[RMDB]
RNA sequence: GGGAACGACUCGAGUAGAGUCGAAAACACGAAUGUUGGCUAAUCCUGGUCGGACAUCAGGCGGUUAGUGCACUGGCAUAAGCCAACUUGGCGCUAAUAGAUACUAAUCGUAGCAUAGCUGAAUAAAAUAUAGGAUAUGGUUCGCCAUAUCCUAUAUAAAAGAAACAACAACAACAAC
Reactivity to 2A3 in 0.01 (KOAc 150mM, MgCl2 10mM, bicine 150mM(pH8.5), 24C), signal-to-noise 7, nucleotides 027 to 126: c090a000c050g110a160a130u180g030u090u070g030g000c020u030a040a090u030c000c000u030g020g020u070c100g090g070a040c020a070u040c010a030g020g010c010g020g010u000u000a000g000u010g020c030a020c050u030g000g020c020a080u090a300a040g000c000c020a030a110c090u020u120g010g000c000g000c020u030a070a030u070a180g090a060u050a050c010u030a020a030u030c020g030u040a020g030c050a100u050a030g000c030u050g070a100a030u130a130a110a070
Reactivity to DMS in 0.01 (KOAc 150mM, MgCl2 10mM, bicine 150mM(pH8.5), 24C), signal-to-noise 8, nucleotides 027 to 126: c060a130c180g010a110a080u030g010u010u010g000g000c020u010a060a070u020c030c020u000g010g020u010c170g010g020a260c100a040u000c010a010g010g000c020g000g020u000u000a010g000u010g010c040a070c080u010g000g000c010a180u020a100a190g000c000c000a090a120c200u040u040g010g020c010g000c020u000a030a080u020a040g010a220u020a030c030u010a020a030u000c010g000u010a060g020c090a100u010a030g010c020u000g000a080a060u020a050a070a070
The data come from the RNA Mapping Database (RMDB), library OK1LIB. Chemical mapping of a 177-nucleotide RNA with 2A3 and DMS. DMS adducts were read by reverse transcription with MarathonRT. The reactions ran in a buffer of 150 mM KOAc, 10 mM MgCl2 and 150 mM bicine (pH 8.5), at 24 C. For 2A3, 5,532 sequencing reads were counted.